[RMDB]
The data come from the RNA Mapping Database (RMDB), library OK1LIB. This 177-nucleotide RNA was probed chemically with 2A3. 2A3 adducts were read by reverse transcription with SuperScript II with manganese. The reactions ran in a buffer of 150 mM KOAc, 10 mM MgCl2 and 150 mM bicine (pH 8.5), at 24 C.
RNA sequence: GGGAACGACUCGAGUAGAGUCGAAAAGAUGGCGGAUACGUCCGCCAUCAACGCCGUAGCGCGCAACGGCGUAACGGCAGCAUUAGCGCGCAGCUGCCGACAAGCGUCGCACUACGGUGCGACGCAAAUGCGAUAUCGUAUUCGUACGAUAUCGCAUAAAAGAAACAACAACAACAAC
Reactivity to 2A3 in 0.01 (KOAc 150mM, MgCl2 10mM, bicine 150mM(pH8.5), 24C), signal-to-noise 1, nucleotides 027 to 126: g000a000u000g010g050c000g000g000a010u010a040c200g130u030c010c000g000c020c000a050u000c000a000a000c000g000c000c000g000u030a040g070c000g000c000g000c060a070a030c020g020g000c030g000u010a110a150c040g080g000c000a000g000c010a030u040u180a120g050c050g000c010g000c150a000g000c010u000g030c000c000g000a140c040a270a000g010c000g000u000c010g000c050a010c000u040a040c300g030g000u000g000c000g000a000c000g000c000a020a040